[RMDB]
RNA sequence: GGGAACGACUCGAGUAGAGUCGAAAAGAUAUGGACUUUCUAUAAUCGGGAGGUGCAAAUCGGAAACGAUUUCGCACCGACGAUCGGUAGAAAGUCCUAAGUCAAAACUCAAUCUUCGGAUUGAGAAUCAUCAGUAUUCGUUCGCGAAUACUGAUGAAAAAGAAACAACAACAACAAC
Reactivity to 2A3 in 0.01 (KOAc 150mM, MgCl2 10mM, bicine 150mM(pH8.5), 24C), signal-to-noise 1, nucleotides 027 to 126: g010a020u080a040u110g000g010a010c020u000u030u000c010u010a030u040a090a080u050c040g040g090g230a080g000g040u020g000c000a000a010a010u010c020g010g000a070a000a020c020g000a000u010u020u060c130g010c000a000c000c000g000a000c000g000a010u010c060g230g000u000a000g000a020a000a000g000u010c000c000u010a010a010g010u000c020a040a040a090a050c000u000c000a000a020u000c000u030u090c300g170g000a000u000u020g010a010g010a000a090
Reactivity to DMS in 0.01 (KOAc 150mM, MgCl2 10mM, bicine 150mM(pH8.5), 24C), signal-to-noise 2, nucleotides 027 to 126: g000a020u000a300u010g000g000a010c010u000u000u010c000u000a020u000a110a030u000c000g000g000g010a290g000g010u010g000c000a010a000a010u000c000g010g000a070a090a200c000g010a010u020u000u010c240g020c000a000c000c000g000a100c050g000a010u000c050g000g040u010a000g000a020a000a010g000u000c000c010u000a000a060g010u010c030a100a060a080a140c010u000c000a000a000u000c000u000u010c210g010g000a010u000u000g000a000g000a090a090